[RMDB]
RNA sequence: GGGAACGACUCGAGUAGAGUCGAAAAAUCCUCAGGUUCAUAAGCGUGAUGAUUGGGUGUUCAUGCUCCAUGCAUGACAUGUGCCUCCUUUGAACCUUGUUACGACCUUGGCACAUUACACAUCUGAAAAAGACGUUCGCGUUCGCGCGAACGUCAACUGGACAAAUUGGUUCGCCAAUUUGUCCAGAAAAGAAACAACAACAACAAC
Reactivity to 2A3 in 0.01 (KOAc 150mM, MgCl2 10mM, bicine 150mM(pH8.5), 24C), signal-to-noise 2, nucleotides 027 to 156: a000u030c000c000u000c000a000g020g000u000u000c000a020u030a300a010g010c090g160u050g070a070u040g000a080u150u200g030g000g000u070g020u110u040c000a000u000g000c000u100c270c040a100u240g000c010a000u010g030a000c000a010u020g020u000g010c010c000u020c010c000u020u000u040g000a000a000c010c010u030u050g000u050u090a120c100g050a140c010c040u060u060g020g040c020a000c000a030u040u190a040c090a000c000a080u030c010u050g040a080a000a010a060a060g000a010c040g010u000u000c000g000c010g040u020u070c120g000c000g000c000g070a000a000c000g000u000c000a000a000